[RMDB]
RNA sequence: GGGAACGACUCGAGUAGAGUCGAAAAGCAAGAUGCUUCGGCAUCUUGCAGUCGUAGCGCGAACGACAGAAUUACAGCUAUGUCGAACGAGGAAGAGCGCGCACAUCAUCCCUUUCGAGGGAUGAAAUGGAAUUAAAAUUUUCGAAUUUUAAUUCCAAAAAGAAACAACAACAACAAC
Reactivity to DMS in 0.01 (KOAc 150mM, MgCl2 10mM, bicine 150mM(pH8.5), 24C), signal-to-noise 5, nucleotides 027 to 126: g010c010a000a000g000a010u000g010c000u000u010c240g020g010c010a000u000c000u000u000g000c010a080g000u000c040g030u000a060g010c010g000c000g010a150a190c000g010a020c000a040g000a120a110u010u010a120c290a110g010c070u010a100u010g000u000c010g010a090a100c090g000a100g020g020a090a050g000a170g000c010g000c020g020c020a110c150a130u010c000a010u000c000c000c000u000u000u010c200g000a010g000g010g010a000u000g000a010a060a100
Reactivity to 2A3 in 0.01 (KOAc 150mM, MgCl2 10mM, bicine 150mM(pH8.5), 24C), signal-to-noise 1, nucleotides 027 to 126: g000c000a000a000g010a000u000g000c020u030u110c190g080g000c010a000u000c000u000u000g010c010a000g010u020c010g010u020a040g030c000g000c020g000a050a020c010g020a010c000a010g030a050a040u200u130a120c060a060g040c080u150a050u140g040u020c000g030a090a040c040g000a100g120g100a090a070g030a020g100c010g000c000g010c000a020c010a070u010c000a000u020c000c000c000u000u050u060c200g090a010g010g000g010a000u000g000a000a000a010

Conditions: 150 mM KOAc, 10 mM MgCl2 and 150 mM bicine (pH 8.5), 24 C.
An RNA of 177 nucleotides, treated with DMS and 2A3 and read out base by base.
In probing experiments dimethyl sulfate is read out at A N1 and C N3, which are open when not base-paired.